[RMDB]
RNA sequence: GGGAACGACUCGAGUAGAGUCGAAAAACCACCUUACUACUGAUGAAGACACCAUUCCAGCGGACCACUGUGAUCCAAGAGGCAUUCAGCCAUCAUGAUGUGGCCUUUACCUCCACUCCUGUCUUGUUGCUAAUACUACGUUCGCGUAGUAUUAGCAAAAAGAAACAACAACAACAAC
Reactivity to DMS in 0.01 (KOAc 150mM, MgCl2 10mM, bicine 150mM(pH8.5), 24C), signal-to-noise 2, nucleotides 027 to 126: a070c010c020a140c130c050u000u000a050c040u000a070c100u000g000a080u000g000a100a050g010a160c050a030c030c010a040u000u010c030c030a090g040c110g000g010a060c020c030a070c070u000g000u010g010a040u000c080c070a090a080g000a070g020g010c050a110u010u010c160a110g010c020c030a050u010c050a070u000g000a120u020g010u010g010g020c040c030u000u000u000a070c070c010u010c010c040a070c050u000c030c010u000g010u020c020u000u010g010u020
Reactivity to 2A3 in 0.01 (KOAc 150mM, MgCl2 10mM, bicine 150mM(pH8.5), 24C), signal-to-noise 2, nucleotides 027 to 126: a040c020c010a050c020c010u080u090a070c020u020a030c010u040g060a080u100g050a150a030g030a010c010a000c030c000a040u080u050c030c010a010g030c040g040g020a040c010c000a030c050u030g060u040g100a040u010c030c000a050a000g050a030g080g020c020a030u140u120c030a090g000c000c020a040u060c010a060u170g100a100u180g050u010g110g000c040c000u080u040u050a060c010c010u000c020c000a030c020u010c000c000u030g020u050c000u030u080g020u050

Conditions: 150 mM KOAc, 10 mM MgCl2 and 150 mM bicine (pH 8.5), 24 C.
Structure probing data (DMS and 2A3) for a 177-nucleotide construct.
For DMS the reverse transcriptase was MarathonRT.
The DMS profile rests on 1,250 reads.
The 2A3 profile rests on 1,770 reads.
2A3 adducts were read by reverse transcription with SuperScript II with manganese.
It was measured as part of the RMDB library RFMREP.